Chemical mapping of a 207-nucleotide RNA with 2A3 and DMS. Reactivities are rounded to 0.1 and cut off at 0 and 3. The RNA was probed in 150 mM KOAc, 10 mM MgCl2 and 150 mM bicine (pH 8.5) at 24 C. DMS (dimethyl sulfate) methylates the pairing face of unpaired adenines and cytosines. As a SHAPE reagent, 2A3 marks flexible, mostly unpaired nucleotides at the ribose 2'-OH. For DMS, 3,679 sequencing reads were counted. Source: RMDB library OK3TST, as collected in RNAgym.

RNA sequence: GGGAACGACUCGAGUAGAGUCGAAAAUGUGUGUGUCUUUACAUACUUAAAAUAGUGGAAUAGCUGAGUCAAAGGGUACCUAUAUUCUCAUACAGUUUUGACUAGAUAUUGUAAUGCUGCCUUUCAAAACAAUUACACCAAGUUGUAAUAGUAAGAGGGUAAUUAACACAUUCGUGUGUUAAUUACCAAAAGAAACAACAACAACAAC
Reactivity to 2A3 in 0.01 (KOAc 150mM, MgCl2 10mM, bicine 150mM(pH8.5), 24C), signal-to-noise 3, nucleotides 027 to 156: u150g010u000g010u000g000u000g010u060c040u030u140u080a010c010a030u070a020c010u120u080a040a080a110a120u120a100g050u080g080g020a030a030u030a050g000c030u020g050a000g020u030c040a000a050a040g050g020g010u010a000c030c040u030a050u010a050u270u060c080u020c030a040u100a080c030a100g040u000u050u060u110g050a040c030u030a000g040a050u020a050u080u040g050u040a050a090u050g040c020u020g010c000c020u050u140u090c140a070a060a030a020c010a040a060u100u040a050c030a010c040c060a100a000g000u030u000g010u010a020a070u030a100g070u060a080a020g050a030g070
Reactivity to DMS in 0.01 (KOAc 150mM, MgCl2 10mM, bicine 150mM(pH8.5), 24C), signal-to-noise 3, nucleotides 027 to 156: u020g050u000g050u000g030u010g000u010c080u000u000u010a080c030a040u000a030c050u010u000a090a100a060a140u020a110g030u000g000g010a120a070u000a060g030c020u000g010a080g040u000c020a040a050a040g000g010g040u010a010c100c050u010a100u010a120u000u000c100u000c020a270u000a040c040a060g010u000u000u000u000g010a130c060u000a050g000a080u000a050u010u000g020u000a090a180u010g010c010u000g030c030c110u040u000u000c040a030a110a090a040c050a100a030u000u000a060c030a090c070c070a040a300g020u000u000g030u000a020a070u000a120g010u020a070a130g000a270g010